[RMDB]
RNA sequence: GGGAACGACUCGAGUAGAGUCGAAAAGCCAAUCCGGAAAUGGAAUGGUUCGACUGUUAGGGGUGUAACGUAUGGGACUUGUUAAACCGUUUCCGGUCAUAGAAACAAAAACAAAGAGGUUACCGCACCUUAAGAGAGGUUUCGACCUCUCUUAAGGAAAAGAAACAACAACAACAAC
Reactivity to 2A3 in 0.01 (KOAc 150mM, MgCl2 10mM, bicine 150mM(pH8.5), 24C), signal-to-noise 5, nucleotides 027 to 126: g060c010c000a010a050u030c000c000g010g030a000a020a020u010g000g030a090a100u100g020g010u020u010c010g140a050c090u090g020u070u030a080g030g110g100g060u160g100u100a010a010c010g030u060a090u150g100g000g000a000c000u050u050g040u110u200a110a120a090c000c000g010u000u000u000c000c000g000g000u010c010a070u120a050g110a030a090a030c070a010a070a050a030a000c040a010a120a060g090a030g060g010u070u040a040c010c010g020c020a050
Reactivity to DMS in 0.01 (KOAc 150mM, MgCl2 10mM, bicine 150mM(pH8.5), 24C), signal-to-noise 6, nucleotides 027 to 126: g020c010c020a160a110u010c010c010g010g010a020a020a030u010g000g010a090a080u010g000g000u000u010c020g010a090c060u020g010u000u000a060g020g020g030g010u020g000u000a030a030c050g020u000a100u010g010g000g000a030c020u000u010g020u010u010a060a090a200c030c010g020u000u000u000c010c000g020g010u010c150a070u010a070g010a090a080a060c140a040a080a070a070a070c110a060a060a100g010a090g000g010u010u000a110c040c030g000c210a160